[RMDB]
RNA sequence: GGGAACGACUCGAGUAGAGUCGAAAAGAUGGCCGCGCCAGUGAGGGGAAACUCCCACGAAGGCACGAAGAAAAUUCUAAAAAAAAAAAUUCUCCUUCACAAACUAAAGCAUGAUGCCAGAGUAUUGCCUGAUUGAGCUAUUCGUAGCUCAAUCAGGAAAAGAAACAACAACAACAAC
Reactivity to 2A3 in 0.01 (KOAc 150mM, MgCl2 10mM, bicine 150mM(pH8.5), 24C), signal-to-noise 1, nucleotides 027 to 126: g140a120u050g030g010c010c000g120c020g070c000c020a010g020u020g040a080g050g010g010g000a000a110a050c070u050c000c000c000a090c050g000a090a000g040g010c060a020c050g000a010a290g080a060a110a060a040u140u150c170u300a010a000a010a000a000a000a000a000a010a000a090u020u000c020u020c000c000u050u020c010a020c020a010a150a040c050u130a060a000a000g010c000a020u160g060a050u120g060c000c000a010g000a000g090u030a050u110u130g020
An RNA of 177 nucleotides, treated with 2A3 and read out base by base. For 2A3, 463 sequencing reads were counted. Conditions: 150 mM KOAc, 10 mM MgCl2 and 150 mM bicine (pH 8.5), 24 C. High 2A3 reactivity points to a flexible backbone, as in loops and unpaired stretches.